Structure probing data (2A3 and DMS) for a 207-nucleotide construct.
[RMDB]
RNA sequence: GGGAACGACUCGAGUAGAGUCGAAAAGUCGAGGCCCUCAUCGUCGUGGACAGGUGGCAAUUCUUGCGUGAGCAUGACACAGUCAGAGAUUGCUGGGUUGAGCCGGUUUUCGAAUACAGCGAGAGCCCUAGAAAUCUCGCCGUGGUCGGAAUUAAGACGUUAGCGGUAGUUUCGACUACCGCUAACGAAAAGAAACAACAACAACAAC
Reactivity to 2A3 in 0.01 (KOAc 150mM, MgCl2 10mM, bicine 150mM(pH8.5), 24C), signal-to-noise 1, nucleotides 027 to 156: g100u080c020g010a070g010g000c010c020c090u050c020a070u050c020g170u010c030g110u060g030g010a070c030a160g030g030u040g000g090c050a030a040u080u070c020u050u030g000c010g030u080g040a080g060c080a070u110g040a030c000a000c010a100g040u090c010a000g000a010g010a080u000u100g010c050u070g030g000g060u000u100g000a000g020c000c000g020g010u020u020u000u080c010g000a030a010u040a080c020a020g010c020g010a030g000a030g020c040c000c000u070a080g160a080a130a050u000c000u000c000g000c000c000g000u010g060g000u040c000g000g020a030a010u050u110a130a110g060a060
Reactivity to DMS in 0.01 (KOAc 150mM, MgCl2 10mM, bicine 150mM(pH8.5), 24C), signal-to-noise 1, nucleotides 027 to 156: g000u000c060g010a090g020g020c010c020c050u020c070a080u000c030g140u010c010g000u000g000g000a060c070a070g040g050u020g010g030c060a090a100u010u010c020u020u000g010c040g060u040g020a170g030c040a070u020g000a090c050a070c040a100g000u010c020a230g000a070g000a070u000u010g020c010u000g030g000g000u010u010g000a110g010c090c010g020g000u000u000u000u000c000g010a040a140u010a010c000a030g010c020g010a060g000a070g000c060c120c010u040a270g030a120a140a070u010c000u010c010g030c000c000g060u000g030g030u000c020g010g020a040a060u000u000a170a110g010a250
The RNA was probed in 150 mM KOAc, 10 mM MgCl2 and 150 mM bicine (pH 8.5) at 24 C. In probing experiments dimethyl sulfate is read out at A N1 and C N3, which are open when not base-paired. As a SHAPE reagent, 2A3 marks flexible, mostly unpaired nucleotides at the ribose 2'-OH. DMS adducts were read by reverse transcription with MarathonRT.